[RMDB]
RNA sequence: GGGAACGACUCGAGUAGAGUCGAAAAACAGGCGACGGUACGCCGUCGCCUGAAAGGGUGUGUGACUGGUUGACCAGAGGGGCGUGCACUCUGUUCACCCUGUGGGCCACCUAGUCACCAACCCUAAGAGUUCAAGCUAAUUCGUUAGCUUGAACUCAAAAGAAACAACAACAACAAC
Reactivity to 2A3 in 0.01 (KOAc 150mM, MgCl2 10mM, bicine 150mM(pH8.5), 24C), signal-to-noise 5, nucleotides 027 to 126: a000c010a000g000g010c000g000a010c030g010g000u080a020c290g030c030c000g020u000c010g010c000c000u000g000a010a000a010g010g000g010u030g000u020g010u000g010a000c020u020g000g020u030u030g030a060c000c000a030g020a020g110g020g010g060c190g050u060g000c030a040c150u260c200u160g040u030u030c000a060c000c000c000u070g070u040g120g000g000c030c010a000c000c010u030a010g000u010c000a000c000c000a020a070c000c000c000u020a090a040
Reactivity to DMS in 0.01 (KOAc 150mM, MgCl2 10mM, bicine 150mM(pH8.5), 24C), signal-to-noise 2, nucleotides 027 to 126: a110c010a000g000g010c010g000a050c050g000g020u010a080c260g060c020c000g080u000c010g010c010c000u000g010a010a020a030g000g000g050u000g000u020g010u000g000a030c000u000g000g000u000u000g000a150c010c000a020g000a080g010g000g000g000c130g050u000g000c040a170c210u000c240u010g020u010u000c000a040c010c000c000u000g040u000g020g000g030c020c090a030c000c030u010a010g000u000c010a000c020c030a030a030c000c000c000u000a080a070

Source: RMDB libraries RFM100 and RFMREP, as collected in RNAgym. An RNA of 177 nucleotides, treated with 2A3 and DMS and read out base by base. For 2A3, 4,384 sequencing reads were counted. The RNA was probed in 150 mM KOAc, 10 mM MgCl2 and 150 mM bicine (pH 8.5) at 24 C.